This 177-nucleotide RNA was probed chemically with DMS and 2A3.
RNA sequence: GGGAACGACUCGAGUAGAGUCGAAAAGCUAGCAAGUGGUGCUGAUGCGCGCUAAGGCACCACAGCCACCGAUGACCUGUAAGGUGGCAAACAGGUCAGCAAAGAAAAGCGCGCACGCGAAAGCGGAGGACUAAAUAGUCUUCGGACUAUUUAGUCCAAAAGAAACAACAACAACAAC
Reactivity to DMS in 0.01 (KOAc 150mM, MgCl2 10mM, bicine 150mM(pH8.5), 24C), signal-to-noise 2, nucleotides 027 to 126: g000c000u040a120g040c090a130a080g060u000g000g010u010g020c010u000g000a090u000g000c000g030c000g010c000u000a200a300g040g000c000a010c010c000a010c000a020g030c040c020a100c030c020g000a110u010g000a090c010c010u000g000u000a180a170g030g000u020g010g000c050a040a180a010c010a000g000g000u000c020a040g000c200a050a090a110g000a100a050a050a010g000c000g000c000g000c000a030c010g020c010g000a060a070a130g000c000g020g000a060
Reactivity to 2A3 in 0.01 (KOAc 150mM, MgCl2 10mM, bicine 150mM(pH8.5), 24C), signal-to-noise 6, nucleotides 027 to 126: g060c070u130a020g090c120a280a060g010u000g000g010u020g000c030u060g010a010u100g000c000g000c000g000c000u010a000a000g010g000c000a010c000c000a000c000a000g000c000c020a030c010c020g150a150u130g030a040c010c000u000g010u050a070a050g060g050u030g030g020c010a010a000a010c030a000g010g040u050c020a020g050c120a110a110a060g150a090a180a020a000g030c000g040c000g020c000a000c000g040c000g020a140a010a030g000c020g020g030a090
Source information: The DMS profile rests on 3,149 reads.